[RMDB]
RNA sequence: GGGAACGACUCGAGUAGAGUCGAAAACGCGGGGGAACGACACCGCGACGACCCGCUCGCGGCUGGCCGGAAUGUUGACCAGCAUGACGGUGUCCGAACGUGCGCCGCCGGCGUCCUCGGCGUCGCCACGUUAAGUUUUGUUCGCAAAACUUAACGUAAAAGAAACAACAACAACAAC
Reactivity to DMS in 0.01 (KOAc 150mM, MgCl2 10mM, bicine 150mM(pH8.5), 24C), signal-to-noise 9, nucleotides 027 to 126: c070g010c020g010g010g010g010g000a120a110c170g000a080c040a040c020c010g010c020g010a090c080g000a170c020c020c020g000c080u000c040g020c080g010g000c030u000g010g020c010c000g020g010a160a080u010g010u010u000g010a070c080c060a060g000c010a040u010g000a130c020g010g010u000g000u000c020c110g010a110a100c120g010u010g000c020g000c040c010g010c020c020g010g000c190g010u010c080c060u010c010g010g010c010g010u000c020g010c020c110
Reactivity to 2A3 in 0.01 (KOAc 150mM, MgCl2 10mM, bicine 150mM(pH8.5), 24C), signal-to-noise 9, nucleotides 027 to 126: c040g000c010g000g000g000g010g010a060a040c030g040a020c030a010c040c010g010c010g010a020c020g060a060c080c030c010g010c050u050c020g050c030g050g010c020u030g080g000c010c020g050g120a170a120u170g070u180u150g160a160c040c020a010g000c010a020u050g030a020c020g020g000u020g020u000c020c020g070a100a030c060g060u110g030c000g000c000c000g000c010c010g030g010c040g100u100c010c020u040c000g030g000c010g000u010c010g000c010c010